The record gives the reactivity of an RNA of 207 nucleotides to DMS and 2A3. For DMS, 4,986 sequencing reads were counted. The reactions ran in a buffer of 150 mM KOAc, 10 mM MgCl2 and 150 mM bicine (pH 8.5), at 24 C. DMS adducts were read by reverse transcription with MarathonRT.
RNA sequence: GGGAACGACUCGAGUAGAGUCGAAAAGGGGUCAUGAAGUCGUCCUUGGAUUUAAGCUUGAGGUAUACUGAAGCCUCCACGGUAUACUACCCACCAAGCUUUGUCAGGACGACGGCAUGACGGAGGCACCCAAAAGUGUGAUGUUCGCAUCACACAACAUCUUGAGUAGGUUCGCCUACUCAAGAUGAAAAGAAACAACAACAACAAC
Reactivity to DMS in 0.01 (KOAc 150mM, MgCl2 10mM, bicine 150mM(pH8.5), 24C), signal-to-noise 3, nucleotides 027 to 156: g020g050g020g000u000c020a020u020g000a070a050g020u010c000g010u010c000c010u000u040g050g030a090u000u000u000a000a050g020c000u010u000g000a170g000g000u000a010u010a020c010u010g020a060a120g050c030c000u000c000c000a300c030g000g030u010a010u010a000c020u000a070c010c000c020a300c140c010a000a030g000c010u000u020u020g010u000c000a040g010g000a030c000g000a010c010g000g040c050a020u000g010a040c010g020g020a050g050g050c030a120c010c010c010a090a020a130a170g000u000g020u010g010a000u010g010u000u020c300g020c010a030u000c000a000c010a010c000a050a100
Reactivity to 2A3 in 0.01 (KOAc 150mM, MgCl2 10mM, bicine 150mM(pH8.5), 24C), signal-to-noise 6, nucleotides 027 to 156: g040g000g010g010u020c010a000u000g020a020a010g010u010c000g010u020c040c060u200u200g130g000a070u250u290u190a010a000g000c000u010u000g000a020g010g000u000a000u000a000c000u020g030a090a010g010c000c000u000c010c000a000c000g010g000u010a000u000a000c010u040a050c090c100c020a030c030c000a010a000g000c000u010u000u020g060u040c140a150g000g000a000c010g000a000c000g000g000c000a000u000g000a000c010g000g000a000g000g000c010a040c010c010c000a060a110a050a070g010u000g000u000g000a010u010g030u060u100c300g000c100a000u000c000a000c000a000c000a000a020